[RMDB]
RNA sequence: GGGAACGACUCGAGUAGAGUCGAAAAUGACGUUUGCUGUGAUUUCCACACCAUCGCUGUAGGUGUUGGUAAUUCCAUAAGCUUGGGUUCCAGCAUUUACUUCAAAUCCGUUAUCUGAGAUAAUGGAAUAUCCUAUAUGCUUCGGCAUAUAGGAUAUAAAAGAAACAACAACAACAAC
Reactivity to DMS in 0.01 (KOAc 150mM, MgCl2 10mM, bicine 150mM(pH8.5), 24C), signal-to-noise 8, nucleotides 027 to 126: u020g010a080c100g010u020u010u000g000c060u020g030u010g010a150u000u010u000c030c020a100c090a080c120c080a070u030c110g020c070u010g010u000a010g010g010u000g000u000u000g000g000u030a010a010u010u040c010c000a020u020a120a130g000c160u010u000g010g000g020u000u000c010c000a020g000c010a010u000u000u000a020c020u000u000c030a070a070a140u000c000c010g020u000u000a000u000c020u040g000a150g000a020u000a010a000u000g000g010a030
Reactivity to 2A3 in 0.01 (KOAc 150mM, MgCl2 10mM, bicine 150mM(pH8.5), 24C), signal-to-noise 9, nucleotides 027 to 126: u160g050a030c080g050u070u090u120g050c100u060g030u040g070a130u040u090u060c030c000a050c000a010c030c040a080u120c080g030c130u090g020u050a020g000g010u010g000u030u020g010g020u110a020a040u270u180c010c010a040u070a130a150g100c140u060u040g000g000g010u010u010c000c000a000g000c000a000u020u030u030a020c000u050u080c060a060a080a140u010c010c000g010u010u000a010u000c060u120g060a050g000a300u010a010a010u010g000g010a030